[RMDB]
RNA sequence: GGGAACGACUCGAGUAGAGUCGAAAAUCCGGGCGCACCUGGGCGCCCGGCGUGGAGGCGCUGACCCACACGCUGCUUUCCACCGCCGUUAACAACAUGAUGCUGCGGGACCGCUGGAGCCUGGUGGCCGAGCGGCGGCGGCAGGCCGGGAUCGCCGCAUAGUGACUGAUUUCGAUCAGUCACUAUGAAAAGAAACAACAACAACAAC
Reactivity to 2A3 in 0.01 (KOAc 150mM, MgCl2 10mM, bicine 150mM(pH8.5), 24C), signal-to-noise 1, nucleotides 027 to 156: u110c030c060g020g040g020c040g010c020a030c010c070u130g000g050g070c020g000c000c010c010g000g010c000g050u050g010g100a040g020g000c010g030c160u070g050a210c010c060c000a010c000a000c070g020c020u120g030c020u170u200u010c020c040a020c010c010g000c000c010g090u100u110a210a060c140a060a000c020a140u200g010a080u110g070c020u100g110c030g030g000g220a240c000c010g010c090u050g060g050a070g040c020c000u100g110g000u110g050g030c000c040g020a000g000c000g030g000c000g020g000c010g000g000c020a040g040g000c010c030g000g000g010a060u100c040g010c030c010g040